Conditions: 150 mM KOAc, 10 mM MgCl2 and 150 mM bicine (pH 8.5), 24 C. Structure probing data (DMS and 2A3) for a 177-nucleotide construct. For 2A3, 3,683 sequencing reads were counted. Reactivities are given for positions 27 through 126. It was measured as part of the RMDB library TTRDEL.

RNA sequence: GGGAACGACUCGAGUAGAGUCGAAAAGAUAUGGAAGGUGUGGGAGCGUUAAUGUCGGAAACGACAUACACGCAUCGAUCACACUUCCUAAGUCAUAGUCCUAUAACGCUUCGGCGUUAUAGGACAAGUUUGUGGUUACGUUCGCGUAACCACAAACAAAAGAAACAACAACAACAAC
Reactivity to DMS in 0.01 (KOAc 150mM, MgCl2 10mM, bicine 150mM(pH8.5), 24C), signal-to-noise 1, nucleotides 027 to 126: g000a020u010a000u000g000g000a010a010g000g010u000g020u000g010g010g000a000g020c010g040u010u000a200a050u000g010u000c000g020g000a000a000a030c000g000a000c000a000u000a060c280a000c010g050c000a300u000c150g000a050u020c000a000c000a040c000u000u000c030c000u000a000a070g010u010c000a150u000a100g000u000c000c000u010a000u000a000a000c000g000c000u010u010c270g020g020c020g040u000u000a010u000a000g000g010a000c000a010a020
Reactivity to 2A3 in 0.01 (KOAc 150mM, MgCl2 10mM, bicine 150mM(pH8.5), 24C), signal-to-noise 1, nucleotides 027 to 126: g010a010u030a000u050g000g020a020a040g300g180u050g040u010g060g000g000a030g000c000g000u010u060a140a020u040g010u010c010g000g000a000a000a000c000g000a000c000a010u030a020c070a000c010g000c000a020u300c020g000a000u000c000a000c000a000c000u000u000c000c000u000a000a010g000u000c020a100u140a080g000u000c000c000u030a000u000a010a000c000g000c010u050u090c300g110g010c020g030u000u000a010u010a010g000g000a000c000a010a000